[RMDB]
RNA sequence: GGGAACGACUCGAGUAGAGUCGAAAAGAAAUAAUGGAGUUCAAUAAGCACCUUGACUAUACUAACGUUGACUGUGCAAGAGUGAAUUAUCUACGAACUUCACAAACACUUAUAGGAAAGGUGUAAAGGCAUUAGAUUACUUCGGUAAUCUAAUGCCAAAAGAAACAACAACAACAAC
Reactivity to 2A3 in 0.01 (KOAc 150mM, MgCl2 10mM, bicine 150mM(pH8.5), 24C), signal-to-noise 4, nucleotides 027 to 126: g030a000a070a010u250a030a070u150g040g060a140g070u070u060c090a070a060u110a110a020g030c010a000c000c000u000u000g000a010c000u000a010u030a040c060u100a100a090c070g030u040u060g110a080c050u100g020u030g020c040a020a010g090a010g010u010g040a050a140u200u050a080u180c030u070a010c040g040a040a040c000u000u000c000a000c000a000a030a000c010a000c060u030u010a020u010a030g060g010a100a010a000g030g000u010g000u040a060a050a060
Reactivity to DMS in 0.01 (KOAc 150mM, MgCl2 10mM, bicine 150mM(pH8.5), 24C), signal-to-noise 2, nucleotides 027 to 126: g020a170a120a050u080a060a070u020g000g020a210g000u000u000c070a070a050u010a040a100g000c000a070c000c000u000u000g000a180c000u010a000u000a040c300u060a060a030c010g080u010u030g010a020c300u000g040u010g020c080a060a000g000a160g000u000g000a040a170u010u060a080u040c160u030a080c060g060a060a020c110u020u000c000a010c160a060a020a080c020a100c080u020u020a000u000a000g000g000a040a040a010g000g040u000g020u040a080a050a100
Structure probing data (2A3 and DMS) for a 177-nucleotide construct. The DMS profile rests on 2,049 reads. Reactivities are given for positions 27 through 126.